[RMDB]
RNA sequence: GGGAACGACUCGAGUAGAGUCGAAAACUCCACGCUGGGUAAAGGACGACGGCGGCGUGUGGCGAACAGGGAUACCGGUAGUCAGUGUCUGGAACAUCCCAAGGGGCGGCGGAGCUAGCACCCCGACAAAACGGGCACAAGUUCGCUUGUGCCCGAAGUAUCUAUACAACUUCGGUUGUAUAGAUACAAAAGAAACAACAACAACAAC
Reactivity to DMS in 0.01 (KOAc 150mM, MgCl2 10mM, bicine 150mM(pH8.5), 24C), signal-to-noise 1, nucleotides 027 to 156: c080u000c010c020a080c020g010c050u000g050g020g010u000a030a080a150g030g010a060c040g030a050c010g030g000c070g000g010c080g040u000g000u000g000g020c030g020a080a130c080a170g020g020g010a130u000a080c050c010g050g000u000a150g010u000c000a090g020u000g030u000c030u000g000g000a100a100c100a150u000c010c000c050a140a090g040g020g030g030c100g020g040c040g000g020a090g010c030u000a100g000c000a070c030c000c000c000g000a150c050a040a070a090a170c050g040g000g060c030a000c010a010a050g070u000u010c300g010c000u020u030g010u000g000c000c000c000g000a010a010
Reactivity to 2A3 in 0.01 (KOAc 150mM, MgCl2 10mM, bicine 150mM(pH8.5), 24C), signal-to-noise 3, nucleotides 027 to 156: c040u050c010c010a020c020g020c010u100g020g020g090u140a090a140a030g080g000a030c040g000a010c050g020g030c030g000g020c020g000u090g030u050g050g010c050g020a090a040c070a120g040g000g010a030u050a070c020c030g030g020u060a020g060u070c050a020g040u020g050u060c020u050g000g010a040a050c010a070u050c000c010c010a050a090g020g000g010g000c060g010g010c050g020g070a050g030c030u020a020g000c020a040c010c010c010c000g010a010c050a000a110a020a010c010g010g000g000c000a000c000a000a010g030u090u100c150g020c090u000u010g000u000g020c000c010c010g000a000a000